The record gives the reactivity of an RNA of 177 nucleotides to 2A3.
RNA sequence: GGGAACGACUCGAGUAGAGUCGAAAAGGGGCGUACUGGAACCCGUCGAGGACGCGCCCGUCGUCGUCGAAGACAACGUUUCACUCGGCGCGGGCUGUCGAGUUACCUCUGGUUUCGUCGUCGGCGAGUGGUGCGUCCGAUUCGUCGGACGCACCACAAAAGAAACAACAACAACAAC
Reactivity to 2A3 in 0.01 (KOAc 150mM, MgCl2 10mM, bicine 150mM(pH8.5), 24C), signal-to-noise 1, nucleotides 027 to 126: g070g010g000g000c000g000u210a070c110u160g040g010a060a060c000c000c000g010u040c040g100a040g000g000a000c030g000c000g000c000c000c000g070u100c000g040u040c000g030u000c040g050a060a040g040a040c050a050a060c180g040u080u110u130c010a010c000u020c000g000g000c030g010c020g000g210g000c090u100g040u090c060g000a040g000u030u240a100c040c000u000c020u040g000g000u000u070u060c000g000u000c000g000u000c000g000g020c000g030a050
The RNA was probed in 150 mM KOAc, 10 mM MgCl2 and 150 mM bicine (pH 8.5) at 24 C.